[RMDB]
RNA sequence: GGGAACGACUCGAGUAGAGUCGAAAAUGCUACACCGACUACACGUAAUUACCGGUGUAGCUAGGGUAGUUACGACAACUGAUCCGAGAGGAUCUACAUUAAGGCGAAGGUGAAAUAUAGGUUAAUAGGCACCUGAAGCCGAACCUAUUAACCAACAACUCAUACCUAAUUUCGAUUAGGUAUGAGUAAAAGAAACAACAACAACAAC
Reactivity to 2A3 in 0.01 (KOAc 150mM, MgCl2 10mM, bicine 150mM(pH8.5), 24C), signal-to-noise 9, nucleotides 027 to 156: u100g010c000u000a000c010a010c000c010g040a030c060u240a040c160a050c120g200u190a170a140u140u110a110c060c010g020g000u000g000u000a000g000c000u010a010g010g010g020u050a040g040u080u120a050c080g040a030c100a110a050c110u080g000a000u000c010c000g010a020g010a030g070g000a000u000c000u020a020c020a060u110u130a080a030g020g010c030g040a030a010g030g000u040g050a020a050a010u260a070u140a160g000g000u000u000a000a000u000a010g000g000c010a010c010c020u020g040a030a000g000c010c010g000a000a000c000c000u000a000u000u000a000a000c000c010a010a020c030a020
Reactivity to DMS in 0.01 (KOAc 150mM, MgCl2 10mM, bicine 150mM(pH8.5), 24C), signal-to-noise 5, nucleotides 027 to 156: u010g000c010u000a020c010a070c010c000g010a070c060u010a060c080a120c190g040u000a120a100u010u000a110c070c030g000g020u000g020u000a010g030c010u000a010g040g000g050u010a060g020u000u010a080c050g020a080c040a090a210c080u010g010a020u000c020c000g010a300g000a300g020g010a020u010c010u010a040c140a140u000u000a120a090g020g020c040g010a140a120g000g010u000g020a070a080a100u010a140u010a080g010g000u000u000a020a020u000a020g000g010c010a040c150c040u000g000a070a110g010c040c020g020a050a050c000c000u000a010u000u000a020a020c010c020a090a100c060a100
Chemical mapping of a 207-nucleotide RNA with 2A3 and DMS. Source: RMDB library OK3TST, as collected in RNAgym. The RNA was probed in 150 mM KOAc, 10 mM MgCl2 and 150 mM bicine (pH 8.5) at 24 C. For 2A3 the reverse transcriptase was SuperScript II with manganese. For DMS the reverse transcriptase was MarathonRT. The DMS profile rests on 12,445 reads. DMS (dimethyl sulfate) methylates the pairing face of unpaired adenines and cytosines.